[RMDB]
RNA sequence: GGGAACGACUCGAGUAGAGUCGAAAAACUCCAGGUAGUGUCAGAAUAAAGUCAUGGGAUACCCAGUUAAUAUCCAGAGCACUGAAGAAUCUGGUGUAGAAACUCCAUACAUACAUUCAGUCGGAAGCAAAGCAGGAGUUUUCGAACUCCUGCUUUGAAAAGAAACAACAACAACAAC
Reactivity to DMS in 0.01 (KOAc 150mM, MgCl2 10mM, bicine 150mM(pH8.5), 24C), signal-to-noise 2, nucleotides 027 to 126: a110c060u000c010c030a050g000g000u020a090g040u000g000u000c020a050g000a170a050u010a090a100a060g010u000c120a110u000g020g010g000a100u000a040c060c040c020a080g010u020u000a080a110u010a010u010c050c000a070g010a100g010c080a040c090u020g010a070a060g010a150a030u010c030u000g010g000u000g020u020a080g010a050a050a100c100u010c010c090a050u010a110c110a070u010a130c140a080u010u000c100a020g010u020c080g000g000a130a110g000

Background: An RNA of 177 nucleotides, treated with DMS and read out base by base. It was measured as part of the RMDB library OK2TST. Values are in units of 0.01, from 0 to 300, in steps of 10. Reactivities are given for positions 27 through 126.